[RMDB]
The data come from the RNA Mapping Database (RMDB), library M2RFPK.
Structure probing data (DMS and 2A3) for a 207-nucleotide construct.
Conditions: 150 mM KOAc, 10 mM MgCl2 and 150 mM bicine (pH 8.5), 24 C.
The DMS profile rests on 1,971 reads.
2A3 adducts were read by reverse transcription with SuperScript II with manganese.
RNA sequence: GGGAACGACUCGAGUAGAGUCGAAAACGUGCCUUCAUGCUAAGGGUUUGAUAUCUGCUAAAACCCGGUGCAUUCAUCAAUGCAGGUUAAGCCAAAGGGAUGUCCAGACCGGAGGCCGACAAUCCAGAUAGCUCAAGAAUGUUCGCAUUCUUGAGAACUGAGAGACAUCCUUCGGGAUGUCUCUCAGAAAAGAAACAACAACAACAAC
Reactivity to DMS in 0.01 (KOAc 150mM, MgCl2 10mM, bicine 150mM(pH8.5), 24C), signal-to-noise 2, nucleotides 027 to 156: c000g030u000g020c000c020u000u000c020a060u010g010c090u030a300a190g000g050g040u010u010u000g060a120u000a020u000c050u000g000c070u000a200a030a020a000c000c000c020g010g090u000g020c010a070u000u000c050a020u030c070a090a160u000g020c020a040g000g020u000u000a120a050g020c090c010a020a300a280g010g000g010a070u010g020u010c090c040a150g010a160c070c010g010g010a300g000g040c020c010g000a060c030a060a140u010c030c000a170g000a150u010a060g060c020u010c000a020a030g030a050a000u010g000u010u000c300g050c020a020u000u010c010u000u000g010a000g000a010a080
Reactivity to 2A3 in 0.01 (KOAc 150mM, MgCl2 10mM, bicine 150mM(pH8.5), 24C), signal-to-noise 2, nucleotides 027 to 156: c060g070u110g050c010c010u080u160c080a080u170g010c010u070a050a100g020g020g000u010u000u010g000a060u040a020u060c040u040g000c000u000a010a000a000a020c000c000c000g000g010u040g000c000a120u190u190c050a040u150c040a100a300u190g000c010a000g000g030u000u010a030a010g000c000c000a000a010a020g100g010g020a040u110g080u100c060c050a020g080a110c000c030g000g000a010g010g000c000c000g000a000c000a090a020u010c060c000a010g080a210u170a060g050c000u010c000a000a000g000a000a000u000g000u000u110c120g050c120a000u000u000c000u000u000g010a000g000a000a010